[RMDB]
RNA sequence: GGGAACGACUCGAGUAGAGUCGAAAAACGUUCAUCUUAUUCGUGGAACCCGCUACGCAGUCCAGCUUCUCCGAAUCGAUGCUUCCACCUCGCAAGCUGCCCGGGUACCUCUGCCGAUUCGGCCACAGGUGCACGUCCCAUUCGUGGGACGUGCACCAAAAGAAACAACAACAACAAC
Reactivity to 2A3 in 0.01 (KOAc 150mM, MgCl2 10mM, bicine 150mM(pH8.5), 24C), signal-to-noise 1, nucleotides 027 to 126: a000c040g000u030u000c010a280u000c020u130u120a210u270u140c000g060u030g060g060a060a060c000c000c010g010c070u010a020c040g100c080a000g040u070c000c000a010g000c060u020u000c020u040c040c010g050a000a050u110c010g010a020u070g050c000u050u010c000c000a040c040c020u010c060g000c000a010a010g010c020u030g000c010c000c000g000g030g100u020a020c010c010u030c020u010g030c000c000g080a040u010u000c060g070g020c000c020a040c000a040
An RNA of 177 nucleotides, treated with 2A3 and read out base by base. For 2A3, 514 sequencing reads were counted. For 2A3 the reverse transcriptase was SuperScript II with manganese. High 2A3 reactivity points to a flexible backbone, as in loops and unpaired stretches. Reactivities are given for positions 27 through 126. It was measured as part of the RMDB library OK1LIB.